[RMDB]
RNA sequence: GGGAACGACUCGAGUAGAGUCGAAAACGCAGACAACCAGGAGGUUGGCUUAGAAGCAGCCACCCCUUCAAAGAGUGCGUAACAGCUCACUGGUCGAGUGGACAUGCGCCGACAAUACACGGGGCUAAGUACGGCGUAGUUUCGACUACGCCGUACUAAAAGAAACAACAACAACAAC
Reactivity to 2A3 in 0.01 (KOAc 150mM, MgCl2 10mM, bicine 150mM(pH8.5), 24C), signal-to-noise 2, nucleotides 027 to 126: c000g000c020a010g070a120c000a030a070c050c060a010g000g030a040g000g120u110u050g020g020c000u030u070a090g050a260a000g140c060a000g040c000c000a010c020c050c000c000u010u030c020a000a000a110g130a010g060u020g000c050g000u000a060a000c030a060g020c000u000c020a040c030u060g070g040u030c000g030a090g020u030g000g090a070c050a150u150g040c000g020c020c000g020a020c000a030a080u120a060c030a050c080g010g000g000g010c000u020a010
Reactivity to DMS in 0.01 (KOAc 150mM, MgCl2 10mM, bicine 150mM(pH8.5), 24C), signal-to-noise 2, nucleotides 027 to 126: c050g000c050a010g010a090c130a150a130c130c070a090g000g000a010g010g000u000u030g000g000c030u000u010a070g000a260a140g010c300a100g000c000c030a000c020c060c090c000u010u000c130a080a130a060g010a170g040u010g040c010g030u020a130a050c030a060g000c000u000c000a010c070u000g010g000u000c090g000a160g000u050g000g000a040c060a100u050g000c000g010c070c010g000a010c080a160a020u030a090c130a160c180g010g070g000g000c070u000a050

Chemical mapping of a 177-nucleotide RNA with 2A3 and DMS. Reactivities are given for positions 27 through 126. Source: RMDB library RFM100, as collected in RNAgym. Conditions: 150 mM KOAc, 10 mM MgCl2 and 150 mM bicine (pH 8.5), 24 C. Reactivities are rounded to 0.1 and cut off at 0 and 3. For 2A3, 1,486 sequencing reads were counted.